[RMDB]
This 177-nucleotide RNA was probed chemically with DMS.
RNA sequence: GGGAACGACUCGAGUAGAGUCGAAAAGGGUUGUAGUUCGCUACAACCCAAAGAAAAGAGCAAGGACCAGCUCAAUAAUGGUCCAAAAAGUACGAAAGUACAAAAUCGUGAAGUUCGCUUCACGAAACAAAAGACUGUUGUUCGCAACAGUCUUUUGAAAAGAAACAACAACAACAAC
Reactivity to DMS in 0.01 (KOAc 150mM, MgCl2 10mM, bicine 150mM(pH8.5), 24C), signal-to-noise 2, nucleotides 027 to 126: g000g010g030u000u000g040u000a000g020u020u010c300g100c010u000a010c000a020a020c000c000c000a010a020a040g000a040a070a150a200g020a000g040c000a090a120g000g000a000c000c030a000g030c010u000c020a080a240u000a020a040u000g000g040u010c010c000a050a050a060a060a040g020u000a000c000g000a170a030a130g000u000a000c000a030a090a060a110u000c010g010u000g000a000a000g000u000u020c230g030c000u000u000c000a000c000g010a020a090a140
Record summary:
High DMS reactivity at an A or C suggests that its Watson-Crick edge is free. Reactivities are given for positions 27 through 126. The reactions ran in a buffer of 150 mM KOAc, 10 mM MgCl2 and 150 mM bicine (pH 8.5), at 24 C.